[RMDB]
RNA sequence: GGGAACGACUCGAGUAGAGUCGAAAAGAAUGCACUAGGGCAUCCACUUCUGCCGUUAAGUUGCAAAAUAAUGAGAUCAAACCUUCAGGUCUAAAAACCAUGGUUGUGUCUGCGGGUCAAGAGCAAAUAACCGAUAUCUUCGGAUAUCGGAAAAGAAACAACAACAACAAC
Reactivity to 2A3 in 0.01 (KOAc 150mM, MgCl2 10mM, bicine 150mM(pH8.5), 24C), signal-to-noise 7, nucleotides 027 to 129: g040a060a050u090g000c020a000c060u050a020g040g020g000c020a040u060c030c000a090c000u130u080c050u070g010c010c010g090u100u040a090a030g060u080u080g010c010a000a080a010a020u250a030a090u140g070a020g030a070u070c080a070a060a120c000c000u100u120c090a040g000g050u030c040u100a090a050a010a010a020c040c030a050u090g040g000u020u060g000u020g010u040c010u060g040c000g040g010g010u100c040a040a020g030a020g050c030a030a060a040u100a120a070
Reactivity to DMS in 0.01 (KOAc 150mM, MgCl2 10mM, bicine 150mM(pH8.5), 24C), signal-to-noise 5, nucleotides 027 to 129: g000a110a090u000g010c040a040c040u000a130g020g000g050c020a020u030c000c020a030c090u040u000c090u000g010c020c010g050u020u020a050a050g000u040u050g020c060a050a020a080a050u040a040a040u040g010a060g020a030u000c030a090a080a110c010c000u020u040c100a050g020g000u020c070u040a040a050a060a100a000c050c050a060u050g000g030u010u010g010u030g000u020c010u040g030c070g030g010g040u030c050a040a060g020a080g030c090a030a030a050u050a080a180